[RMDB]
RNA sequence: GGGAACGACUCGAGUAGAGUCGAAAAGCUCGCGGGACACGAUCACCAUCGUCGGAUUCAGCGUUGCGAGGGUUUCGUCGUCCCAGGACCACACGAACUCAAGCGGCGCGGUGUGCUUCGCCAGAGUGAAACUGAACCGAUUCGUCGGUUCAGUUUCAAAAGAAACAACAACAACAAC
Reactivity to DMS in 0.01 (KOAc 150mM, MgCl2 10mM, bicine 150mM(pH8.5), 24C), signal-to-noise 2, nucleotides 027 to 126: g000c040u000c000g000c060g000g000g010a060c050a010c020g000a130u000c210a070c020c050a030u000c030g020u020c050g000g040a110u030u070c280a110g000c080g010u050u000g000c030g000a110g000g040g040u080u000u010c030g000u000c150g000u010c000c030c060a060g000g000a100c100c000a060c070a300c150g040a060a030c040u040c000a070a300g030c020g000g000c040g000c020g010g020u070g010u040g000c060u000u010c000g000c010c000a070g000a070g000u000
Reactivity to 2A3 in 0.01 (KOAc 150mM, MgCl2 10mM, bicine 150mM(pH8.5), 24C), signal-to-noise 4, nucleotides 027 to 126: g010c010u000c030g050c040g010g000g010a020c010a000c020g020a050u040c020a000c050c010a090u030c040g120u030c040g030g030a070u190u160c080a070g040c040g080u130u120g020c010g010a010g000g000g000u020u040u010c030g000u020c030g010u000c020c020c000a000g040g020a010c010c000a020c000a010c080g050a080a030c010u020c080a050a030g010c020g000g010c010g000c030g070g000u100g000u050g020c020u050u050c010g010c020c010a030g020a020g080u070